[RMDB]
RNA sequence: GGGAACGACUCGAGUAGAGUCGAAAACUUUUUGCUGCUGAGACUUUACGUGCCACUGAAGAGGCGUCUAAGCAGUCUUAUGCUAUUGCCACCAUCAAAGAAAUUGUUGGUGAGCGCCAACUAUUACCAAUCCCUCUAUCUUCGGAUAGAGGGAUUGAAAAGAAACAACAACAACAAC
Reactivity to DMS in 0.01 (KOAc 150mM, MgCl2 10mM, bicine 150mM(pH8.5), 24C), signal-to-noise 2, nucleotides 027 to 126: c030u000u000u000u000u000g020c020u010g000c000u000g000a070g000a020c080u040u040u010a130c230g030u030g010c030c020a150c130u000g020a170a170g010a120g020g010c000g010u000c020u000a090a010g000c040a000g000u010c170u000u000a040u010g030c080u000a080u000u020g000c010c020a020c010c010a000u000c020a030a050a170g040a090a090a120u000u000g000u000u000g010g020u000g000a070g020c040g000c140c100a040a070c100u000a080u000u010a160c260
Reactivity to 2A3 in 0.01 (KOAc 150mM, MgCl2 10mM, bicine 150mM(pH8.5), 24C), signal-to-noise 3, nucleotides 027 to 126: c010u100u050u000u230u180g020c020u010g020c000u010g040a000g010a010c000u090u120u150a080c190g060u120g020c000c020a050c060u140g090a150a010g090a100g110g000c020g000u000c000u010a020a020g060c000a000g000u010c010u070u050a110u120g010c000u060a080u150u180g010c000c000a000c000c010a010u010c010a050a060a140g180a200a300a160u090u020g010u030u010g030g000u020g040a080g000c010g030c020c010a050a050c040u120a110u250u100a080c030

An RNA of 177 nucleotides, treated with DMS and 2A3 and read out base by base.
The reactions ran in a buffer of 150 mM KOAc, 10 mM MgCl2 and 150 mM bicine (pH 8.5), at 24 C.
For DMS the reverse transcriptase was MarathonRT.
The data come from the RNA Mapping Database (RMDB), library 15KREP.
For 2A3 the reverse transcriptase was SuperScript II with manganese.
Values cover nucleotides 27 to 126.
Values are in units of 0.01, from 0 to 300, in steps of 10.